[RMDB]
RNA sequence: GGGAACGACUCGAGUAGAGUCGAAAACUAGUCACUUUUUGGAAUAUCUGUAGCAAUAAUAGUAGGAACAGUAGAUGUGCCUUUGGAGUGAAAAUAAAUAGCCAUUUAAAACAUAGGCCUUUAUCAACAUUUAGUUCUUUCAAUUAGGAAAUGGAGAGACUUAACCGUAUUUCGAUACGGUUAAGUCAAAAGAAACAACAACAACAAC
Reactivity to 2A3 in 0.01 (KOAc 150mM, MgCl2 10mM, bicine 150mM(pH8.5), 24C), signal-to-noise 4, nucleotides 027 to 156: c020u010a020g120u080c010a020c030u100u090u050u110u130g080g040a080a050u090a070u130c060u040g050u090a050g010c030a050a050u080a170a040u040a120g060u040a070g020g060a060a010c050a040g030u040a020g000a060u040g040u050g010c000c000u060u060u070g030g030a060g020u040g020a020a030a020a030u110a020a070a040u080a050g000c020c000a000u070u090u110a070a100a030a030c050a030u080a060g000g050c000c010u070u200u090a090u100c040a020a050c000a030u000u080u100a030g010u050u020c000u010u070u040c060a150a180u080u080a060g020g070a060a060a080u130g030g010a080g020a020
Reactivity to DMS in 0.01 (KOAc 150mM, MgCl2 10mM, bicine 150mM(pH8.5), 24C), signal-to-noise 1, nucleotides 027 to 156: c030u010a090g010u000c050a000c030u000u010u000u000u030g010g020a150a020u010a040u000c020u020g020u000a140g000c040a120a100u000a090a110u000a110g000u000a030g030g010a070a090c040a090g000u000a080g010a050u000g040u000g010c050c020u000u000u030g010g020a090g030u010g020a100a070a060a070u000a000a030a060u010a060g020c010c010a090u010u000u010a060a050a090a120c130a040u010a170g060g020c030c020u010u010u020a040u000c040a050a110c020a030u010u000u000a040g000u000u000c020u010u000u000c010a070a130u020u000a070g040g010a030a030a080u000g000g000a200g000a210
This 207-nucleotide RNA was probed chemically with 2A3 and DMS. Conditions: 150 mM KOAc, 10 mM MgCl2 and 150 mM bicine (pH 8.5), 24 C. 2A3 adducts were read by reverse transcription with SuperScript II with manganese. For 2A3, 2,096 sequencing reads were counted. For DMS, 2,506 sequencing reads were counted.